[RMDB]
RNA sequence: GGGAACGACUCGAGUAGAGUCGAAAAGAUAUGGAGAGGCACUAAAGGCAACAGCUCGGAAACGAGACAUGCCUGGUGGCCUCUCCUAAGUCAAACUAAACGAUGACGUUCGCGUCAUCGUUUAGAAGGUAACAAGCAUCUUCGGAUGCUUGUUACCAAAAGAAACAACAACAACAAC
Reactivity to 2A3 in 0.01 (KOAc 150mM, MgCl2 10mM, bicine 150mM(pH8.5), 24C), signal-to-noise 1, nucleotides 027 to 126: g000a010u040a000u080g010g000a010g010a010g040g000c010a000c250u180a300a090a060g000g000c000a040a010c050a230g050c010u000c000g030g000a050a030a040c010g000a000g100a070c040a060u070g000c000c000u000g020g030u010g030g000c000c000u030c010u020c000c000u040a000a000g000u000c000a000a000a060c000u000a000a000a010c000g020a000u000g020a000c000g000u070u060c230g060c020g120u010c000a010u020c010g010u000u000u000a010g000a010a020
Reactivity to DMS in 0.01 (KOAc 150mM, MgCl2 10mM, bicine 150mM(pH8.5), 24C), signal-to-noise 2, nucleotides 027 to 126: g010a070u010a270u000g020g000a000g040a000g000g030c030a020c010u000a070a110a080g000g000c000a040a060c250a110g000c000u000c000g010g000a100a110a210c010g000a010g000a070c040a190u010g010c010c010u000g010g000u000g010g000c000c000u000c000u000c010c000u000a020a030g000u000c030a050a120a300c000u010a010a010a010c000g040a010u000g000a000c000g000u010u020c290g020c000g030u010c000a000u000c000g000u000u000u000a000g000a130a050
Conditions: 150 mM KOAc, 10 mM MgCl2 and 150 mM bicine (pH 8.5), 24 C. Chemical mapping of a 177-nucleotide RNA with 2A3 and DMS. For 2A3, 2,068 sequencing reads were counted. For DMS, 1,295 sequencing reads were counted. 2A3 adducts were read by reverse transcription with SuperScript II with manganese.